Structure probing data (2A3 and DMS) for a 177-nucleotide construct. The 2A3 profile rests on 2,266 reads. It was measured as part of the RMDB library OK1LIB. For DMS the reverse transcriptase was MarathonRT. High 2A3 reactivity points to a flexible backbone, as in loops and unpaired stretches. The RNA was probed in 150 mM KOAc, 10 mM MgCl2 and 150 mM bicine (pH 8.5) at 24 C. 2A3 adducts were read by reverse transcription with SuperScript II with manganese.
[RMDB]
RNA sequence: GGGAACGACUCGAGUAGAGUCGAAAAUUGGAGAAGCGCCGCGGUUAAUUCCGUUCCGUCACGAGUACGUCUAGCUAACUAUCUCCCAUACUGUUAGCUACGCUUAAUACGUGGAAUUGGUAGUAUGUCAUUCGCUCAUGUUCGCAUGAGCGAAUGAAAAAGAAACAACAACAACAAC
Reactivity to 2A3 in 0.01 (KOAc 150mM, MgCl2 10mM, bicine 150mM(pH8.5), 24C), signal-to-noise 3, nucleotides 027 to 126: u040u100g030g020a100g020a070a060g020c020g010c030c020g000c010g030g020u050u150a050a020u220u000c030c010g010u050u010c020c000g050u030c020a000c050g030a030g040u090a030c040g050u010c030u000a000g000c000u010a000a000c000u020a020u090c100u030c000c010c000a020u090a110c070u080g000u000u000a000g000c000u020a030c040g020c000u030u090a050a020u130a100c020g000u020g020g010a080a090u060u060g050g000u010a090g040u020a060u140g130
Reactivity to DMS in 0.01 (KOAc 150mM, MgCl2 10mM, bicine 150mM(pH8.5), 24C), signal-to-noise 2, nucleotides 027 to 126: u020u030g000g000a030g000a120a170g020c060g000c050c030g000c010g000g020u000u010a130a050u020u000c020c000g000u000u020c010c000g020u000c050a020c030g000a100g010u040a110c190g000u010c080u000a010g000c010u020a020a020c020u000a170u010c080u020c000c000c020a180u000a040c220u020g000u010u000a010g000c000u010a040c300g020c020u030u010a040a140u050a050c180g000u000g000g000a060a190u000u000g000g010u020a100g000u030a030u050g000